[RMDB]
RNA sequence: GGGAACGACUCGAGUAGAGUCGAAAAAUUGAAACAUACCCUAUUCUCAGUCGAACAGCACUAGGCGAAGAAACAAGGCAACGGUUACUUAAAUUAGCAUAUGCAAACUCCCCGUUGAGUCAUGAAACUUGUCCAGUGUUUUCGAACACUGGACAAGAAAAGAAACAACAACAACAAC
Reactivity to DMS in 0.01 (KOAc 150mM, MgCl2 10mM, bicine 150mM(pH8.5), 24C), signal-to-noise 2, nucleotides 027 to 126: a050u000u090g000a130a030a140c180a090u050a100c080c000c000u000a100u000u020c060u000c050a020g010u010c050g000a070a070c060a090g020c090a020c020u010a050g000g040c010g070a180a070g000a030a060a050c040a090a140g010g000c050a000a010c080g000g040u040u040a040c050u020u000a050a030a030u010u010a060g010c000a080u060a060u050g070c070a000a010a120c150u000c030c000c000c070g000u000u030g000a070g000u000c070a020u010g010a120a070a030
Reactivity to 2A3 in 0.01 (KOAc 150mM, MgCl2 10mM, bicine 150mM(pH8.5), 24C), signal-to-noise 2, nucleotides 027 to 126: a000u170u150g050a070a070a000c040a070u160a050c000c000c000u040a080u130u010c040u000c100a030g010u050c020g120a120a060c060a070g060c000a000c080u090a020g000g000c120g010a060a050g030a060a160a000c100a090a000g080g000c010a080a000c100g030g000u040u130a070c020u200u180a010a060a100u060u000a110g000c010a020u110a080u280g050c010a050a000a070c040u060c020c000c000c000g000u000u000g080a010g080u070c060a010u160g070a060a020a020